[RMDB]
RNA sequence: GGGAACGACUCGAGUAGAGUCGAAAAUGAAAGUGAAAGAUUUUUGGUACGUUUCUAGAAAGUAAAUAAAUGAAUCCAAGUUUCAAGCACAUUGUCUUUACACUAGUGUGGCAGGCUGGCAGCCUACGAAGGAUAUGCCAUUCGUGGCAUAUCCUUCAAAAGAAACAACAACAACAAC
Reactivity to 2A3 in 0.01 (KOAc 150mM, MgCl2 10mM, bicine 150mM(pH8.5), 24C), signal-to-noise 3, nucleotides 027 to 126: u160g050a020a030a010g160u080g060a060a000a020g050a080u070u140u020u090u120g030g000u020a010c040g000u040u030u000c010u040a010g120a060a130a010g020u110a030a020a120u180a000a090a050u120g000a010a010u030c000c000a020a030g000u000u010u080c030a050a010g000c040a080c000a080u000u110g000u040c000u000u020u120a070c040a000c010u060a090g060u060g020u010g180g000c040a050g000g000c000u040g020g020c050a000g020c020c000u070a070c050
Reactivity to DMS in 0.01 (KOAc 150mM, MgCl2 10mM, bicine 150mM(pH8.5), 24C), signal-to-noise 3, nucleotides 027 to 126: u030g000a090a080a120g020u000g030a080a110a080g010a070u000u000u000u010u010g010g010u000a090c090g010u000u000u000c070u020a060g000a110a070a040g010u030a030a040a070u010a030a030a080u010g020a120a090u000c020c010a040a060g000u000u010u000c040a070a100g000c050a010c020a080u000u000g010u000c030u010u010u010a050c040a000c130u000a070g020u010g040u010g030g020c040a030g010g010c000u020g000g020c100a050g000c030c030u000a060c150